Description: Chemical mapping of a 177-nucleotide RNA with 2A3 and DMS. The reactions ran in a buffer of 150 mM KOAc, 10 mM MgCl2 and 150 mM bicine (pH 8.5), at 24 C. 2A3 adducts were read by reverse transcription with SuperScript II with manganese. The DMS profile rests on 11,910 reads.
RNA sequence: GGGAACGACUCGAGUAGAGUCGAAAAGUAUUGCCUUAUUAACGGCGUUGACCUAUCCAACGAUUUUUAGUCGUGUAGCAAUGUUAAGUCCACAUUCAGAUGACAAAGUAUUAGAUAAGCUAAAUCAAACGUACUGUAUGUUCGCAUACAGUACGUUAAAAGAAACAACAACAACAAC
Reactivity to 2A3 in 0.01 (KOAc 150mM, MgCl2 10mM, bicine 150mM(pH8.5), 24C), signal-to-noise 7, nucleotides 027 to 126: g070u080a110u110u160g050c020c010u170u150a180u160u160a160a040c080g010g000c020g000u030u110g060a040c000c020u030a060u070c050c040a040a030c010g010a030u000u090u030u050u160a080g000u050c030g020u070g040u070a040g020c040a020a020u050g040u070u160a140a100g060u060c050c010a060c000a060u070u110c020a050g060a200u130g020a040c050a020a140a020g090u100a130u200u070a060g070a090u100a150a000g030c040u050a030a070a100u100c090a100
Reactivity to DMS in 0.01 (KOAc 150mM, MgCl2 10mM, bicine 150mM(pH8.5), 24C), signal-to-noise 6, nucleotides 027 to 126: g000u020a040u020u030g000c020c040u010u010a070u040u010a110a110c150g010g000c030g010u020u010g000a120c100c030u010a060u010c060c060a060a040c050g010a040u010u020u000u020u030a140g010u000c000g020u000g010u020a070g020c050a050a050u010g010u000u010a070a140g000u020c040c060a040c050a060u010u020c090a090g010a050u010g000a040c100a040a050a140g000u030a070u000u030a050g020a060u020a040a110g010c070u010a030a070a070u020c090a090